[RMDB]
RNA sequence: GGGAACGACUCGAGUAGAGUCGAAAAGCAGGGAAGAAAGACCUGGACUUCCACCUUGUGCUUUCUGAUGUGCUGGGAACUUCCAAUGCUAAGCCCUCAGAAGCCACCCUGACAGGGAACUAAUGAACAUAUGGAUCGCAUUCGUGCGAUCCAUAUGAAAAGAAACAACAACAACAAC
Reactivity to DMS in 0.01 (KOAc 150mM, MgCl2 10mM, bicine 150mM(pH8.5), 24C), signal-to-noise 2, nucleotides 027 to 126: g000c100a120g010g000g000a060a040g000a040a040a110g010a300c000c000u000g000g010a070c010u000u000c040c040a170c150c060u000u000g000u010g000c010u000u000u000c010u000g000a050u000g000u020g010c000u000g000g030g000a120a070c140u010u010c150c190a060a170u020g030c060u020a090a060g000c010c020c130u000c020a020g010a060a060g010c020c030a070c010c000c010u010g000a080c010a030g000g000g000a110a090c190u000a080a110u010g010a110a240
Reactivity to 2A3 in 0.01 (KOAc 150mM, MgCl2 10mM, bicine 150mM(pH8.5), 24C), signal-to-noise 1, nucleotides 027 to 126: g040c050a030g020g020g030a020a060g010a050a150a090g060a050c010c000u020g040g030a010c020u050u000c000c040a150c050c000u090u070g050u130g040c040u090u180u040c000u020g010a050u030g090u050g060c000u050g010g060g060a110a030c000u270u030c070c050a050a180u120g060c030u070a030a000g020c030c000c010u020c000a010g000a050a000g010c010c000a070c010c020c020u050g040a030c010a000g060g020g000a010a020c060u080a190a120u240g070a100a000
The record gives the reactivity of an RNA of 177 nucleotides to DMS and 2A3. The DMS profile rests on 1,188 reads. Source: RMDB library OK2TRN, as collected in RNAgym.